RNA sequence: GGGAACGACUCGAGUAGAGUCGAAAACGUAUCAUUGUUCGCAAUGAUACGCGCUAGAUAUGGAAAGCGAUGAAACCGCAGCAAUGAUGUCGGAAACGAUUGAGCUGACGGUGGAGCUUUCCUAAGUCCUCUAUAUAGGAUAUUCGUAUCCUAUAAACUUAGGUCGAUAUUUCGAUAUCGACCUAAGAAAAGAAACAACAACAACAAC
Reactivity to DMS in 0.01 (KOAc 150mM, MgCl2 10mM, bicine 150mM(pH8.5), 24C), signal-to-noise 2, nucleotides 027 to 156: c010g000u010a010u000c010a020u000u010g000u000u000c300g030c030a040a030u000g000a030u000a020c000g020c000g000c090u010a070g020a100u000a230u020g000g000a050a000a030g020c010g000a160u000g000a130a060a180c000c010g050c000a020g030c020a060a020u000g030a040u010g000u000c000g020g020a170a160a280c020g000a030u000u000g010a050g010c000u000g000a150c050g000g000u000g020g000a280g000c000u000u000u000c000c000u000a010a120g000u000c010c020u000c060u010a190u000a030u010a020g020g010a010u000a020u000u000c300g030u000a040u000c000c000u000a010u000a000a110a170
Reactivity to 2A3 in 0.01 (KOAc 150mM, MgCl2 10mM, bicine 150mM(pH8.5), 24C), signal-to-noise 6, nucleotides 027 to 156: c000g000u000a000u010c000a000u000u020g030u080u090c260g010c120a000a000u010g000a000u000a000c000g000c000g020c040u140a070g030a210u100a040u190g000g010a010a000a000g000c030g180a280u040g020a030a000a000c010c000g000c000a000g000c010a010a280u200g040a040u120g060u010c000g010g060a090a080a070c000g010a010u020u060g020a010g000c000u010g090a300c000g000g000u000g000g010a000g000c000u000u000u020c000c000u000a010a000g010u020c010c020u010c040u040a080u020a000u010a170g000g010a010u000a030u020u130c260g020u020a000u010c000c000u000a010u050a040a020a020